[RMDB]
About this RNA: Chemical mapping of a 177-nucleotide RNA with 2A3 and DMS. Conditions: 150 mM KOAc, 10 mM MgCl2 and 150 mM bicine (pH 8.5), 24 C. 2A3 adducts were read by reverse transcription with SuperScript II with manganese. High 2A3 reactivity points to a flexible backbone, as in loops and unpaired stretches. Values cover nucleotides 27 to 126. The data come from the RNA Mapping Database (RMDB), library RFM100.
RNA sequence: GGGAACGACUCGAGUAGAGUCGAAAAAGCUCGGUGAAGUCGGCUGAAUACACUCGCUGUAUCGACAACAAUCAUAUUGUAUCGUUACGGCAAAAGCAAGCCAGAGGUGGCUGUGAGUGUUAGGCCGCCACACCUUCGCUUUCGAGCGAAGGUGUGGAAAAGAAACAACAACAACAAC
Reactivity to 2A3 in 0.01 (KOAc 150mM, MgCl2 10mM, bicine 150mM(pH8.5), 24C), signal-to-noise 1, nucleotides 027 to 126: a000g000c000u030c080g010g190u190g090a080a140g000u060c040g020g000c000u000g010a070a000u110a040c000a000c000u000c040g000c000u000g000u000a010u050c000g020a010c010a300a020c000a080a000u070c080a010u090a050u080u000g040u030a020u000c000g000u020u020a030c030g010g000c010a030a030a030a020g020c020a050a000g000c020c020a000g030a090g300g150u090g000g000c010u000g000u020g000a000g020u000g000u030u110a010g000g010c000c000g000
Reactivity to DMS in 0.01 (KOAc 150mM, MgCl2 10mM, bicine 150mM(pH8.5), 24C), signal-to-noise 1, nucleotides 027 to 126: a090g000c000u000c120g000g080u000g000a000a110g000u000c000g000g050c080u000g010a120a080u000a000c020a040c000u000c000g100c000u000g010u010a000u000c000g000a040c130a010a090c030a000a040u000c150a070u040a300u000u010g000u000a150u010c050g020u020u010a000c000g000g000c070a130a040a050a010g000c000a030a080g000c020c000a000g040a130g010g000u000g000g040c000u000g010u120g000a040g000u000g000u000u000a030g000g000c000c000g000